[RMDB]
RNA sequence: GGGAACGACUCGAGUAGAGUCGAAAAUGAAAUAACUAGCAUGCAUAAGACGAGGUAGAGCGCGCGCACUACCAAAAGAUGUGUGUAAAAACGCACGUGUAGGCGCGGCUACACAAAUAAACAAAAAUCAAUAUAACAUCUUCGGAUGUUAUAUUGAAAAAGAAACAACAACAACAAC
Reactivity to 2A3 in 0.01 (KOAc 150mM, MgCl2 10mM, bicine 150mM(pH8.5), 24C), signal-to-noise 4, nucleotides 027 to 126: u120g040a040a020a050u180a020a030c050u030a010g030c020a050u080g000c000a030u030a170a060g080a080c080g040a040g060g030u040a020g020a020g050c170g000c010g000c000g000c130a130c140u010a000c000c000a000a110a050a090g130a070u090g000u000g010u010g000u040a070a070a020a010a040c020g020c010a020c050g070u100g000u030a010g020g000c020g000c010g020g010c000u030a010c020a000c000a000a140a040u180a060a070a010c060a020a060a030a000a040
Reactivity to DMS in 0.01 (KOAc 150mM, MgCl2 10mM, bicine 150mM(pH8.5), 24C), signal-to-noise 4, nucleotides 027 to 126: u010g000a070a090a050u010a080a120c070u000a100g020c020a020u000g020c040a050u000a090a080g010a100c170g000a130g010g010u000a060g000a030g010c050g010c030g010c020g000c020a130c000u000a020c020c070a070a080a080a100g000a090u000g010u010g020u000g000u010a050a100a090a080a070c060g010c040a020c080g000u010g010u000a010g000g000c010g000c010g000g000c020u000a030c060a020c050a070a060a050u010a030a020a030c040a010a070a090a080a050